This 177-nucleotide RNA was probed chemically with 2A3 and DMS. Values cover nucleotides 27 to 126. For 2A3 the reverse transcriptase was SuperScript II with manganese. It was measured as part of the RMDB libraries RFM100 and RFMREP.
[RMDB]
RNA sequence: GGGAACGACUCGAGUAGAGUCGAAAACACUGCACGACAGUGCGAUAGGGGGACUCCGAGUGUGAGGGCAUAUAGCCCUCGCUUUUCUGUACCGUAAGGUGGUUCAGGAACAAGGACUGGGCAAGACUUACCAUGUCGGAUUCGUCCGACAUGGUAAAAAAGAAACAACAACAACAAC
Reactivity to 2A3 in 0.01 (KOAc 150mM, MgCl2 10mM, bicine 150mM(pH8.5), 24C), signal-to-noise 5, nucleotides 027 to 126: c020a000c020u040g000c040a070c250g230a140c050a030g020u020g030c020g030a040u150a080g030g010g000g000g050a020c020u000c020c030g010a030g020u100g000u020g010a010g000g030g000c040a030u190a040u140a300g000c000c000c000u000c000g000c000u040u000u010u000c000u000g020u030a030c000c000g080u110a070a080g100g080u180g030g000u060u010c020a010g030g000a010a040c040a060a090g040g050a040c040u040g000g020g000c030a060a020g020a010c020
Reactivity to DMS in 0.01 (KOAc 150mM, MgCl2 10mM, bicine 150mM(pH8.5), 24C), signal-to-noise 4, nucleotides 027 to 126: c040a070c050u010g030c040a110c130g020a130c160a050g000u000g000c000g020a100u030a060g010g020g020g010g000a110c090u000c050c040g010a060g000u020g000u020g010a000g030g000g010c000a150u060a130u030a180g000c000c000c000u010c010g010c010u000u010u010u000c020u000g000u020a020c000c000g000u060a100a130g020g030u030g010g010u030u010c040a020g000g010a020a040c270a080a100g000g010a080c060u000g000g000g010c100a070a050g000a130c150